Conditions: 150 mM KOAc, 10 mM MgCl2 and 150 mM bicine (pH 8.5), 24 C. This 207-nucleotide RNA was probed chemically with DMS and 2A3. The data come from the RNA Mapping Database (RMDB), library OK3TST. Reactivities are given for positions 27 through 156. For 2A3, 6,064 sequencing reads were counted.
RNA sequence: GGGAACGACUCGAGUAGAGUCGAAAACGAUCAGUACGUUCGCGUACUGAUCGAAGCUACUGGAGACAGUAGCAAGUCUAAGACCUUGUUAGGCGGAAACAAGGAAAAAUGGAGGAUGGCCGGGCCUCCAUACUUAGACAACCGCCAACCGGCCAAACAUUUACGGUAUGUUCGCAUACCGUAAAUGAAAAGAAACAACAACAACAAC
Reactivity to DMS in 0.01 (KOAc 150mM, MgCl2 10mM, bicine 150mM(pH8.5), 24C), signal-to-noise 1, nucleotides 027 to 156: c030g010a000u000c000a010g100u000a040c020g030u000u000c300g040c050g080u000a010c000u000g010a000u000c000g000a020a080g020c030u000a030c000u020g080g010a300g000a300c000a010g020u000a020g030c000a010a100g060u000c090u000a050a060g000a300c010c010u000u000g000u020u010a080g000g070c020g150g000a300a100a020c000a000a060g010g020a020a040a040a140a120u000g010g010a060g010g000a150u000g010g000c030c020g070g080g000c030c000u000c010c000a010u000a020c030u000u000a000g030a190c070a050a120c090c020g020c160c020a120a100c000c050g050g000c000c000a020a040a170
Reactivity to 2A3 in 0.01 (KOAc 150mM, MgCl2 10mM, bicine 150mM(pH8.5), 24C), signal-to-noise 4, nucleotides 027 to 156: c010g000a000u000c000a000g000u000a000c010g020u040u080c250g000c000g080u000a000c000u000g000a000u000c000g000a000a000g000c000u000a000c000u000g000g030a030g020a040c000a000g000u010a000g000c000a010a010g000u000c000u010a020a030g020a120c000c000u020u000g020u010u050a120g060g080c100g040g050a070a030a010c010a010a000g040g020a090a090a050a020a010u020g000g000a000g000g020a030u060g000g000c010c000g010g000g060c000c000u010c010c000a000u010a010c000u010u000a000g010a030c030a040a090c080c050g070c040c010a020a040c000c000g000g010c000c000a010a010a000